[RMDB]
RNA sequence: GGGAACGACUCGAGUAGAGUCGAAAAGUGGAUUCAACUCUUGAGCGCCGAGCUUAACCUGCAGAAGUUCACAUAAAAAGUGCCCGUCUGGGGAAGACACUACGUGACUGACCUGUAUGGUGGCAAGGAAUACUCAAGGGUUCGCCCUUGAGUAUUCAAAAGAAACAACAACAACAAC
Reactivity to 2A3 in 0.01 (KOAc 150mM, MgCl2 10mM, bicine 150mM(pH8.5), 24C), signal-to-noise 2, nucleotides 027 to 126: g120u110g090g010a080u040u090c030a050a060c030u000c010u090u080g040a010g040c050g060c010c010g030a000g020c010u080u090a040a040c000c000u000g010c000a010g010a100a000g020u160u100c020a010c010a020u230a070a130a000a030a010g040u020g040c030c010c000g150u160c210u300g020g000g010g010a020a010g100a010c000a000c030u110a020c070g020u000g000a000c000u010g050a030c000c000u050g000u010a050u180g000g030u000g000g000c010a010a010g100
Reactivity to DMS in 0.01 (KOAc 150mM, MgCl2 10mM, bicine 150mM(pH8.5), 24C), signal-to-noise 2, nucleotides 027 to 126: g010u000g020g000a120u000u020c030a060a060c060u000c020u010u000g000a050g030c160g030c040c030g010a160g000c010u000u000a120a040c020c000u000g010c010a020g010a050a070g020u010u000c000a020c010a100u010a050a040a070a130a090g020u000g010c000c000c050g010u020c120u010g020g020g000g000a150a070g000a260c020a020c040u040a050c120g030u000g000a020c040u000g010a130c160c020u000g000u000a020u010g040g040u000g000g000c020a150a170g000

Source information: Source: RMDB library VIROID, as collected in RNAgym. This 177-nucleotide RNA was probed chemically with 2A3 and DMS. The RNA was probed in 150 mM KOAc, 10 mM MgCl2 and 150 mM bicine (pH 8.5) at 24 C. 2A3 adducts were read by reverse transcription with SuperScript II with manganese.